[RMDB]
RNA sequence: GGGAACGACUCGAGUAGAGUCGAAAAGAUAUGGAGAACAGGCCUCGCGAAACUGUCGUGUCGGAAACGACACAACAGGAGAGGCUGUUCUCCUAAGUCAAAAUCACAGGAGUUCGCUCCUGUGAAACUAGCACUCAAAGUUCGCUUUGAGUGCUAGAAAAGAAACAACAACAACAAC
Reactivity to 2A3 in 0.01 (KOAc 150mM, MgCl2 10mM, bicine 150mM(pH8.5), 24C), signal-to-noise 2, nucleotides 027 to 126: g020a000u010a010u070g000g000a020g000a010a010c020a060g300g170c000c020u020c030g030c080g180a210a060a000c000u020g000u010c000g000u000g010u000c010g020g000a000a000a020c010g000a000c000a020c040a030a000c000a000g030g010a120g000a000g000g010c010u010g000u000u000c000u000c000c010u000a000a000g010u000c000a040a000a000a280u050c010a000c010a010g000g020a010g030u110u200c280g140c170u020c010c020u010g000u010g000a010a000a000
Reactivity to DMS in 0.01 (KOAc 150mM, MgCl2 10mM, bicine 150mM(pH8.5), 24C), signal-to-noise 2, nucleotides 027 to 126: g000a030u000a020u030g000g010a020g020a010a020c000a020g030g020c020c000u010c000g040c240g020a190a060a040c000u000g020u000c040g040u000g000u000c010g020g000a000a020a020c000g020a010c000a000c000a010a000c010a000g030g000a020g000a010g000g000c000u000g000u000u000c000u000c000c000u000a010a070g000u000c030a080a070a120a230u010c010a010c000a000g010g000a020g000u020u020c300g030c000u000c000c000u000g010u010g000a010a070a120

An RNA of 177 nucleotides, treated with 2A3 and DMS and read out base by base. Conditions: 150 mM KOAc, 10 mM MgCl2 and 150 mM bicine (pH 8.5), 24 C. The 2A3 profile rests on 5,126 reads.